RNA sequence: GGGAACGACUCGAGUAGAGUCGAAAAGUUGUAGAGCGCGACGACAAAUACAUGUCCGACUUCAACGAAAUGGUGCCGGAGUUCAUCAGCAAGAUGGAUGAAUCUCUGGCGGAGAUCGGUUUCACCUUCGGGGAGCAGUGGAAAUGAAACAUUACCGUCUCUUUGGUACUUUCGAGUACCAAAGAGAAAAAGAAACAACAACAACAAC
Reactivity to 2A3 in 0.01 (KOAc 150mM, MgCl2 10mM, bicine 150mM(pH8.5), 24C), signal-to-noise 2, nucleotides 027 to 156: g040u030u020g030u060a020g040a080g100c030g000c140g070a020c000g020a050c110a000a180a020u190a090c080a100u100g020u000c000c000g000a040c000u010u000c010a010a000c020g050a030a050a110u150g080g000u120g030c000c000g000g000a000g010u000u020c000a000u000c010a000g120c070a120a070g070a200u240g020g030a000u000g050a020a070u110c010u020c010u090g000g010c000g010g030a000g000a020u070c050g010g000u040u030u060c090a150c050c020u130u180c100g000g000g000g000a020g050c050a040g010u030g020g030a000a060a120u110g000a040a050a060c070a040u200u260a070c150c010g040
An RNA of 207 nucleotides, treated with 2A3 and read out base by base. Conditions: 150 mM KOAc, 10 mM MgCl2 and 150 mM bicine (pH 8.5), 24 C. The data come from the RNA Mapping Database (RMDB), library OK3TST.